[RMDB]
RNA sequence: GGGAACGACUCGAGUAGAGUCGAAAAAAAACAUUGCUUUUAAUGUUGUUAAACAAGGCCAUUUUAUUGGUGUUGAGGGUGAACUACCUGUAGCUGUAGUCAAUGAUAAGAUCUUCACCAAGAGUGGGGAGACAUUAUAGUUCGCUAUAAUGUCUCCAAAAGAAACAACAACAACAAC
Reactivity to DMS in 0.01 (KOAc 150mM, MgCl2 10mM, bicine 150mM(pH8.5), 24C), signal-to-noise 2, nucleotides 027 to 126: a100a030a000a040c060a060u010u000g000c190u000u000u010u000a030a050u000g000u000u000g030u000u000a080a090a040c120a060a040g000g010c040c010a040u000u000u010u020a160u020u020g000g030u010g000u000u000g000a040g010g010g040u010g000a060a030c030u000a040c020c030u000g040u000a070g030c190u000g030u000a020g000u000c030a040a100u000g010a180u010a070a110g000a120u000c020u000u000c000a030c010c000a000a010g000a030g030u000g010g020
Reactivity to 2A3 in 0.01 (KOAc 150mM, MgCl2 10mM, bicine 150mM(pH8.5), 24C), signal-to-noise 2, nucleotides 027 to 126: a010a000a010a010c100a040u090u060g100c070u170u170u140u140a060a070u050g000u030u010g030u040u120a100a060a020c040a090a000g060g000c000c020a030u050u010u070u090a170u010u030g000g000u020g020u010u010g010a020g000g010g090u070g020a080a020c000u000a010c030c030u080g100u140a040g010c110u060g030u010a000g020u040c010a040a050u120g060a060u070a140a050g020a030u000c010u000u000c000a010c010c000a000a010g030a000g000u010g000g050